Background: The data come from the RNA Mapping Database (RMDB), library OK1LIB. Chemical mapping of a 177-nucleotide RNA with 2A3 and DMS. DMS adducts were read by reverse transcription with MarathonRT. For 2A3, 2,315 sequencing reads were counted. 2A3 adducts were read by reverse transcription with SuperScript II with manganese.

RNA sequence: GGGAACGACUCGAGUAGAGUCGAAAACAAACAAACCAACCACACUCAGAGCCCAAAUAAGCCGCGUUAACCUCAUCUCAGCGGCAGAGAUGAAAAGGACGCAUACGUCCAAAGGGCUCUGACAAAACAUCUGCUAUGUCUUCGGACAUAGCAGAUGAAAAGAAACAACAACAACAAC
Reactivity to 2A3 in 0.01 (KOAc 150mM, MgCl2 10mM, bicine 150mM(pH8.5), 24C), signal-to-noise 2, nucleotides 027 to 126: c090a000a160a010c030a040a050a000c030c020a010a040c050c030a050c020a050c050u010c000a000g000a000g000c010c010c010a040a080a030u070a030a000g010c000c010g000c010g000u000u050a070a120c000c000u050c000a020u010c010u000c010a060g040c060g090g000c020a000g000a000g000a000u060g050a070a060a030a000g050g000a000c000g000c010a020u040a190c030g050u000c030c000a070a000a000g000g000g000c000u000c000u020g000a000c000a000a080a000a000
Reactivity to DMS in 0.01 (KOAc 150mM, MgCl2 10mM, bicine 150mM(pH8.5), 24C), signal-to-noise 1, nucleotides 027 to 126: c030a010a090a190c170a090a040a090c010c080a060a210c120c070a060c070a170c280u010c000a000g000a000g000c000c000c000a000a070a000u000a140a290g000c000c050g000c000g040u000u000a080a120c120c090u040c000a000u000c000u000c040a120g000c000g000g000c000a050g000a000g000a030u000g000a000a050a000a190g000g010a000c000g000c000a080u000a050c180g000u000c000c010a080a250a280g000g000g000c000u000c000u150g000a000c260a010a040a040a090